[RMDB]
RNA sequence: GGGAACGACUCGAGUAGAGUCGAAAACGUGAUGGGGCUGUUUUCUGCGCUUAACCCCGUCUUCCAAUAAUUGGAAAAAUGCAGUGCAUUGCACUUGAUUGCACAACUCCUCGUCAGCGUUAGGGAAUUAUAUGUUGCACUUCGGUGCAACAUAUAAAAAAGAAACAACAACAACAAC
Reactivity to DMS in 0.01 (KOAc 150mM, MgCl2 10mM, bicine 150mM(pH8.5), 24C), signal-to-noise 5, nucleotides 027 to 126: c050g020u010g010a020u000g010g000g000g020c160u000g000u000u000u010u000c060u010g030c040g010c040u010u030a220a190c030c010c010c040g010u020c070u020u010c000c000a030a170u050a100a160u020u000g020g000a000a050a070a100a070u010g010c030a060g010u000g000c040a100u020u000g000c020a070c110u010u030g000a090u020u000g000c020a040c140a080a070c120u010c020c000u000c010g020u000c050a030g010c020g040u000u000a060g010g020g010a080a120
Reactivity to 2A3 in 0.01 (KOAc 150mM, MgCl2 10mM, bicine 150mM(pH8.5), 24C), signal-to-noise 6, nucleotides 027 to 126: c050g040u040g020a020u040g010g000g000g000c100u030g130u080u040u050u050c030u050g010c020g010c040u080u120a080a080c000c000c000c010g010u000c000u000u000c010c010a060a120u290a210a100u210u110g020g050a030a040a010a000a030u130g010c020a010g030u000g020c030a100u040u140g060c030a020c120u030u180g060a060u080u120g010c010a000c010a030a090c030u010c020c000u020c030g060u030c030a040g020c030g030u030u070a060g040g010g030a010a010
Chemical mapping of a 177-nucleotide RNA with DMS and 2A3. Reactivities are given for positions 27 through 126. The reactions ran in a buffer of 150 mM KOAc, 10 mM MgCl2 and 150 mM bicine (pH 8.5), at 24 C.